RNA sequence: GGGAACGACUCGAGUAGAGUCGAAAAAUGAUUAGCAUGGAGCUGUAGGAGUCUAAAUUGGGGACGCAGAUGUUUGGGACGUCACCUUGCAGUGUUAACUUGGCUCUCAUGAACCUCUUUGAUCUUCUCGUAGAAUCUCAUUCGUGAGAUUCUACGAAAAAGAAACAACAACAACAAC
Reactivity to 2A3 in 0.01 (KOAc 150mM, MgCl2 10mM, bicine 150mM(pH8.5), 24C), signal-to-noise 7, nucleotides 027 to 126: a000u210g020a040u100u110a030g030c030a010u030g010g000a010g000c000u070g070u190a020g000g080a050g040u030c020u100a100a140a130u160u130g010g000g020g010a000c010g010c020a030g080a210u140g150u230u190u110g110g040g040a070c030g000u040c020a130c080c000u000u040g000c050a050g020u040g030u190u070a060a040c010u020u030g010g000c000u000c000u010c030a010u000g030a040a060c010c010u040c070u090u070u130g030a040u030c000u030u000c000
Reactivity to DMS in 0.01 (KOAc 150mM, MgCl2 10mM, bicine 150mM(pH8.5), 24C), signal-to-noise 4, nucleotides 027 to 126: a030u000g000a100u020u010a080g010c010a030u000g000g000a060g020c010u000g000u010a040g010g000a130g010u010c030u000a030a080a140u020u010g010g010g000g000a030c020g000c080a140g000a100u010g010u020u010u000g020g010g000a160c020g000u000c020a060c030c010u000u010g030c150a040g010u020g000u010u020a050a180c040u000u010g000g000c020u000c040u020c020a040u010g010a060a120c080c020u010c130u000u010u010g000a080u010c030u000u010c260

Source: RMDB libraries RFM100 and RFMREP, as collected in RNAgym.
Chemical mapping of a 177-nucleotide RNA with 2A3 and DMS.
The reactions ran in a buffer of 150 mM KOAc, 10 mM MgCl2 and 150 mM bicine (pH 8.5), at 24 C.